[RMDB]
RNA sequence: GGGAACGACUCGAGUAGAGUCGAAAAUGUAAUUGGUGCUUGAUUAGCCAAGAUUCCAUAACUCACUACCCAGCUCUUAAGAUGGUUCAAACACAUCUUAGCCACUAUGUUCUUAACAUAGAUUGGUAACCUGUCACCUUCGGGUGACAGAAAAGAAACAACAACAACAAC
Reactivity to 2A3 in 0.01 (KOAc 150mM, MgCl2 10mM, bicine 150mM(pH8.5), 24C), signal-to-noise 7, nucleotides 027 to 129: u090g000u060a030a120u060u070g020g000u090g020c020u080u070g100a160u140u180a030g040c030c000a020a030g050a180u090u010c040c000a020u040a100a070c020u030c110a060c060u070a080c030c000c010a030g020c010u040c030u160u060a000a000g000a010u020g000g050u100u160c120a110a140a020c090a030c010a070u000c000u020u030a020g010c010c000a000c020u000a000u030g010u090u080c120u220u280a050a000c000a010u010a040g040a120u010u080g000g000u010a030a020c000
Reactivity to DMS in 0.01 (KOAc 150mM, MgCl2 10mM, bicine 150mM(pH8.5), 24C), signal-to-noise 4, nucleotides 027 to 129: u030g060u020a050a030u000u000g000g000u030g030c060u000u060g000a210u000u000a110g040c080c020a050a050g010a080u060u010c040c000a060u030a060a180c130u020c120a030c100u000a140c010c000c020a090g030c170u010c090u030u020a040a000g010a050u010g000g000u050u040c240a140a070a080c200a060c000a020u020c010u050u010a100g010c000c140a040c010u010a000u000g020u010u040c160u030u020a050a020c030a010u020a000g000a080u030u020g000g050u040a010a020c080